[RMDB]
RNA sequence: GGGAACGACUCGAGUAGAGUCGAAAAGAUAUGGAUAUUCGUCCAUUUACGAGUUCCGGGAGGAGUUAUCGGAAACGAUAAUACUCCGAAGAACGGACGGCUCGUAAAUGGACGAAUAUCCUAAGUCCAUUAGGUAGGACUUCGGUCCUACCUAAUGAAAAGAAACAACAACAACAAC
Reactivity to DMS in 0.01 (KOAc 150mM, MgCl2 10mM, bicine 150mM(pH8.5), 24C), signal-to-noise 5, nucleotides 027 to 126: g000a060u000a300u010g020g010a010u010a000u010u000c010g010u010c000c000a000u000u000u000a010c000g020a030g010u010u010c000c010g000g020g010a100g010g010a040g010u000u010a000u000c000g000g000a170a150a190c020g010a000u010a010a090u020a150c020u010c000c000g010a130a150g000a230a270c020g000g000a050c300g010g000c000u000c000g000u000a000a000a000u000g000g000a000c000g010a010a000u000a010u000c000c010u010a010a050g000u010c050

Structure probing data (DMS) for a 177-nucleotide construct.
It was measured as part of the RMDB library TTRINS.